Source information: Structure probing data (2A3 and DMS) for a 177-nucleotide construct. The 2A3 profile rests on 35,841 reads. The RNA was probed in 150 mM KOAc, 10 mM MgCl2 and 150 mM bicine (pH 8.5) at 24 C.

[RMDB]
RNA sequence: GGGAACGACUCGAGUAGAGUCGAAAAGUCUAGCGAAUGGAUCCCACCCGGGAGACACGCAAGUCGCGAAUUAGGCCGACCGGCCAAGGUCAAUGGCAGAACUCAACUGCAUGAGUAAGCUAGACGAACUAUGAUCCAUAUUCGUAUGGAUCAUAGUAAAAGAAACAACAACAACAAC
Reactivity to 2A3 in 0.01 (KOAc 150mM, MgCl2 10mM, bicine 150mM(pH8.5), 24C), signal-to-noise 9, nucleotides 027 to 126: g000u000c000u000a000g000c000g070a100a100u100g090g030a030u010c010c000c010a030c020c030c000g020g020g010a050g010a020c040a020c040g030c040a070a080g220u180c060g010c030g060a080a160u180u060a160g080g000c030c010g030a070c020c040g020g030c010c030a020a020g030g000u030c030a040a100u170g060g000c010a010g030a110a070c040u050c150a040a130c050u080g020c040a070u070g010a030g120u040a030a020g000c000u000a000g000a010c010g000a010
Reactivity to DMS in 0.01 (KOAc 150mM, MgCl2 10mM, bicine 150mM(pH8.5), 24C), signal-to-noise 9, nucleotides 027 to 126: g010u000c000u000a010g000c010g010a160a110u000g010g010a120u000c000c000c000a190c300c050c120g000g010g010a100g000a090c030a100c080g000c050a080a100g010u010c170g010c090g020a110a060u000u010a120g000g020c010c000g000a100c120c110g000g010c050c070a080a090g000g000u000c020a070a130u010g000g000c010a030g010a070a070c080u010c100a050a100c050u000g000c070a080u000g000a110g010u000a060a180g000c000u000a010g000a020c010g010a080

Source information: Values cover nucleotides 27 to 126. Source: RMDB library OK2TRN, as collected in RNAgym.